[RMDB]
RNA sequence: GGGAACGACUCGAGUAGAGUCGAAAACUCGAAUCUUUCGAGAUUCGAGACUCUCGAAGUGUCAAUAAGAUCGAAAAGAUCGCCGAGCAUAAAUUAGACACAAUGCUGCUUGAUUCGUCAAGCAGAAGUGCAAGGUUGCAUUCGUGCAACCUUGCACAAAAGAAACAACAACAACAAC
Reactivity to DMS in 0.01 (KOAc 150mM, MgCl2 10mM, bicine 150mM(pH8.5), 24C), signal-to-noise 1, nucleotides 027 to 126: c000u020c000g000a010a000u000c000u000u030u010c190g010a010g000a000u000u000c000g000a010g010a130c180u000c000u000c010g010a130a290g000u000g000u000c000a050a170u000a170a060g000a000u030c000g010a200a090a140a220g010a000u000c010g000c050c120g140a110g050c300a060u010a030a040a060u000u000a170g000a030c000a000c000a150a080u000g000c000u000g000c000u000u080g000a030u000u000c140g000u000c000a040a000g010c010a000g010a000a050
Reactivity to 2A3 in 0.01 (KOAc 150mM, MgCl2 10mM, bicine 150mM(pH8.5), 24C), signal-to-noise 1, nucleotides 027 to 126: c000u030c000g000a020a010u020c020u030u090u240c220g100a000g000a030u000u010c000g000a010g020a030c030u020c000u000c010g030a250a040g010u000g050u060c010a070a040u120a150a060g000a010u000c000g080a120a100a190a070g000a030u000c010g020c000c020g040a030g060c060a210u150a130a160a040u070u030a060g020a000c000a000c000a010a070u140g000c000u010g000c000u030u000g020a040u030u100c230g000u030c060a010a000g020c010a000g010a040a010